[RMDB]
RNA sequence: GGGAACGACUCGAGUAGAGUCGAAAAGGGGUCGGUGACAUGAGCUCCCAUUGGCAUCGAUCUACACUGAAGCCUCCACGGUGUAGGGAGCCAUGUGGAGCUCAACAGCACCGACGGAGGCACCCAAAACAGUUGUUGGAUUCGUCCAACAACUGAAGCAAAAGUGUUUGUUCGCAAACACUUUUGCAAAAGAAACAACAACAACAAC
Reactivity to 2A3 in 0.01 (KOAc 150mM, MgCl2 10mM, bicine 150mM(pH8.5), 24C), signal-to-noise 1, nucleotides 027 to 156: g020g000g050g060u000c000g000g030u010g000a070c140a220u300g000a000g040c000u000c000c010c010a030u080u210g000g020c040a070u300c240g000a010u000c000u040a010c010a000c030u060g120a090a000g020c000c050u030c030c000a000c030g000g020u010g000u000a000g030g010g010a020g000c060c000a000u130g090u300g030g010a020g030c000u000c030a000a010c000a000g040c010a000c020c000g020a020c040g000g000a000g010g010c020a000c010c000c000a000a040a000a120c020a000g000u000u000g010u010u000g000g000a040u040u200c290g070u000c100c000a000a010c000a000a000c000u000g000a030a010
This 207-nucleotide RNA was probed chemically with 2A3. For 2A3, 853 sequencing reads were counted. The reactions ran in a buffer of 150 mM KOAc, 10 mM MgCl2 and 150 mM bicine (pH 8.5), at 24 C. The data come from the RNA Mapping Database (RMDB), library RNAMAK.